[RMDB]
RNA sequence: GGGAACGACUCGAGUAGAGUCGAAAAGAUAUGGAGUCACUUAGACAUGUCGAAGUGUCGGAAACGACACCGACAACAGCUAAGGUGACUCCUAAGUCAAAAGGUGAGCCCCUUCGGGGGCUCACCACGAUAGGAAAUGGUUCGCCAUUUCCUAUCGAAAAGAAACAACAACAACAAC
Reactivity to 2A3 in 0.01 (KOAc 150mM, MgCl2 10mM, bicine 150mM(pH8.5), 24C), signal-to-noise 1, nucleotides 027 to 126: g030a000u040a020u130g010g000a000g000u000c000a000c000u020u010a050g090a200c080a260u160g000u000c030g110a300a190g000u000g000u000c000g000g000a030a040a020c030g030a010c000a000c000c000g020a010c010a130a100c050a060g130c010u030a060a030g120g040u050g020a000c000u030c000c000u010a010a000g010u000c020a000a000a170a120g000g000u040g010a000g020c100c000c100c140u040u300c300g060g000g110g040g140c000u000c000a000c000c000a000
Reactivity to DMS in 0.01 (KOAc 150mM, MgCl2 10mM, bicine 150mM(pH8.5), 24C), signal-to-noise 2, nucleotides 027 to 126: g000a020u010a300u020g000g000a020g000u000c000a040c010u000u010a010g010a100c100a160u020g020u000c020g000a300a070g000u000g020u000c000g030g000a120a070a220c000g020a020c010a000c000c020g000a120c300a050a100c220a070g050c010u000a020a010g020g010u010g000a000c000u010c000c000u000a010a100g000u010c030a090a110a120a100g000g010u020g040a060g010c000c000c020c060u000u000c250g040g100g000g030g000c010u000c000a000c000c030a020

This 177-nucleotide RNA was probed chemically with 2A3 and DMS. The 2A3 profile rests on 2,854 reads. It was measured as part of the RMDB library TTRDES. For DMS the reverse transcriptase was MarathonRT. 2A3 adducts were read by reverse transcription with SuperScript II with manganese. The reactions ran in a buffer of 150 mM KOAc, 10 mM MgCl2 and 150 mM bicine (pH 8.5), at 24 C.